[RMDB]
Chemical mapping of a 207-nucleotide RNA with 2A3. Values are in units of 0.01, from 0 to 300, in steps of 10. The RNA was probed in 150 mM KOAc, 10 mM MgCl2 and 150 mM bicine (pH 8.5) at 24 C. The 2A3 profile rests on 923 reads.
RNA sequence: GGGAACGACUCGAGUAGAGUCGAAAACCGGGCGCUCCCCUCGGACCUCCUCCGGAGGGGUUCACAUCCCCAGCCUGCGGGCCGGCUACUCUUCUUUUCCUUUCCUCGUCUUCAACGGUCAACCUUCCGAGUUCCUCUUCCUCCUCCCUGCUGAGGCGAUGUCAUAUACGUUCGCGUAUAUGACAUCAAAAGAAACAACAACAACAAC
Reactivity to 2A3 in 0.01 (KOAc 150mM, MgCl2 10mM, bicine 150mM(pH8.5), 24C), signal-to-noise 1, nucleotides 027 to 156: c000c000g000g010g010c030g060c020u080c000c010c010c010u030c020g030g020a080c010c030u100c030c030u050c090c050g050g010a050g000g000g000g060u070u090c060a030c030a150u120c020c030c040c010a040g010c000c030u030g020c030g010g020g000c050c010g030g000c050u060a060c020u040c000u130u080c000u070u060u060u030c010c000u100u070u080c020c040u040c020g070u060c030u160u090c100a060a040c000g070g000u030c020a050a060c040c000u030u030c020c030g010a030g040u030u040c030c000u040c040u080u030c010c030u010c010c020u020c000c000c020u060g030c060u080g040a030g020g050c010